[RMDB]
RNA sequence: GGGAACGACUCGAGUAGAGUCGAAAAGACGCACGAGUGCAGCGUCAAGGAAGACAAGAGGCCGUCUUCCAAGUACUCGAAGACACCGGAAGGCGGAAACGUCUUCCAAGGCCUCAAGGUGUCGAAAGGGUACGAGCAAGUUCGCUUGUUCGUACCCAAAAGAAACAACAACAACAAC
Reactivity to DMS in 0.01 (KOAc 150mM, MgCl2 10mM, bicine 150mM(pH8.5), 24C), signal-to-noise 3, nucleotides 027 to 126: g000a000c030g020c040a120c070g010a100g020u010g010c050a190g000c000g000u000c060a130a150g030g000a010a000g000a000c010a080a090g020a040g000g020c000c000g020u000c000u000u000c000c010a060a080g040u000a040c030u000c040g010a130a110g000a010c060a040c090c070g010g000a040a000g000g030c000g000g000a030a020a090c030g030u000c010u000u000c010c000a100a030g000g000c020c010u000c030a140a100g000g020u000g000u010c020g010a050a100a160
Reactivity to 2A3 in 0.01 (KOAc 150mM, MgCl2 10mM, bicine 150mM(pH8.5), 24C), signal-to-noise 5, nucleotides 027 to 126: g020a000c010g060c010a020c150g140a100g140u230g040c110a040g010c040g010u010c030a000a020g010g010a000a010g000a010c010a070a070g000a010g020g030c000c000g000u000c000u010u000c000c000a010a000g040u030a060c020u010c070g040a080a030g020a010c020a010c010c040g000g010a000a000g010g000c020g000g000a000a040a010c010g010u000c000u020u010c000c000a000a000g010g000c000c000u010c000a000a060g020g000u010g010u020c020g010a080a000a010